[RMDB]
RNA sequence: GGGAACGACUCGAGUAGAGUCGAAAAGAUAUGGAUCGUCGGGAGUCACCUACUCGGAAACGAGUAGCUGACGAAGAACGAGCGAUCCUAAGUCAAACGAUGACAAAGGUUCGCCUUUGUCAUCGAAGACAGUAACCAACUUCGGUUGGUUACUGUCAAAAGAAACAACAACAACAAC
Reactivity to DMS in 0.01 (KOAc 150mM, MgCl2 10mM, bicine 150mM(pH8.5), 24C), signal-to-noise 3, nucleotides 027 to 126: g050a010u000a050u030g000g000a010u000c000g020u000c000g030g000g010a050g000u000c020a000c300c000u000a010c000u010c000g020g010a010a010a030c010g020a030g000u000a000g050c110u000g040a010c000g010a090a130g000a150a190c020g000a030g000c000g010a000u000c000c010u000a000a090g000u000c000a110a110a220c010g010a030u000g010a020c000a000a000a000g020g000u000u010c250g000c000c000u000u000u000g000u000c000a010u000c000g010a030a080
Reactivity to 2A3 in 0.01 (KOAc 150mM, MgCl2 10mM, bicine 150mM(pH8.5), 24C), signal-to-noise 1, nucleotides 027 to 126: g000a010u010a000u050g010g000a010u010c010g040u010c010g000g000g000a020g000u000c010a010c000c000u010a000c000u000c000g000g010a000a000a000c010g000a000g000u000a000g000c010u010g000a000c020g080a130a000g000a010a010c020g010a020g150c010g010a010u000c000c000u000a000a000g000u000c050a130a100a070c020g020a000u000g000a000c000a010a000a000g060g020u080u120c300g240c020c000u000u000u000g000u000c000a000u000c000g000a000a000

Source: RMDB library TTRDEL, as collected in RNAgym. This 177-nucleotide RNA was probed chemically with DMS and 2A3. The DMS profile rests on 2,922 reads. Reactivities are given for positions 27 through 126. 2A3 adducts were read by reverse transcription with SuperScript II with manganese. DMS adducts were read by reverse transcription with MarathonRT.